[RMDB]
RNA sequence: GGGAACGACUCGAGUAGAGUCGAAAAGAUAUGGACCAGCUACCCACCUCCAGUCAAGCGCAGAUAAAUAAUGGCUCGGAAACGAGCCAUUAUUUGUAGCUUGCCUGGAGAGGCUGGUCCUAAGUCACAUUAUGUGGACGUUCGCGUCCACAUAAUGAAAAGAAACAACAACAACAAC
Reactivity to DMS in 0.01 (KOAc 150mM, MgCl2 10mM, bicine 150mM(pH8.5), 24C), signal-to-noise 2, nucleotides 027 to 126: g000a140u010a170u010g000g000a000c020c000a010g000c000u020a130c040c030c070a300c110c000u010c000c000a010g000u000c000a000a000g000c020g000c300a100g010a070u000a010a010a030u000a000a010u000g000g000c000u000c000g000g000a020a060a240c000g010a020g000c000c000a010u000u000a000u000u000u000g000u000a100g020c010u000u000g000c050c010u000g000g000a020g010a000g020g000c000u000g000g010u000c010c000u000a000a090g020u000c140a140